[RMDB]
RNA sequence: GGGAACGACUCGAGUAGAGUCGAAAAAAGUGUGAUCUACACGAACGUGUUGCCCUUUCAGUAUUACGAUGCGUAGGAAGUGAGCCGAAAUGGAUCAUGCUUGGCUUCAUGACUGUCACCGCAUUGAGCAUGCCUAAAUGUUCGCAUUUAGGCAUGCAAAAGAAACAACAACAACAAC
Reactivity to 2A3 in 0.01 (KOAc 150mM, MgCl2 10mM, bicine 150mM(pH8.5), 24C), signal-to-noise 2, nucleotides 027 to 126: a000a000g090u080g050u010g030a050u000c020u050a010c000a000c040g130a300a050c120g080u100g110u100u130g140c020c020c000u000u160u080c110a070g020u070a100u160u170a040c050g020a000u030g000c020g040u050a070g000g010a030a000g000u040g000a010g020c010c040g050a020a030a020u090g010g010a070u080c030a010u070g020c020u070u040g020g000c030u130u110c050a050u030g040a030c010u010g010u200c020a000c020c070g070c000a000u000u000g020a020
Reactivity to DMS in 0.01 (KOAc 150mM, MgCl2 10mM, bicine 150mM(pH8.5), 24C), signal-to-noise 4, nucleotides 027 to 126: a030a040g010u020g020u010g030a050u000c020u000a030c030a070c080g020a120a090c200g010u010g020u000u000g030c020c030c020u000u000u010c200a140g010u020a100u000u000a240c060g020a010u010g010c000g010u010a110g010g010a060a210g020u000g010a050g030c000c010g010a040a080a080u000g010g010a050u000c040a010u000g000c040u000u000g010g000c030u000u020c030a000u000g010a300c040u000g010u020c060a100c300c030g030c030a040u000u000g000a110
The record gives the reactivity of an RNA of 177 nucleotides to 2A3 and DMS.
The RNA was probed in 150 mM KOAc, 10 mM MgCl2 and 150 mM bicine (pH 8.5) at 24 C.
For DMS the reverse transcriptase was MarathonRT.
The data come from the RNA Mapping Database (RMDB), library OK2TST.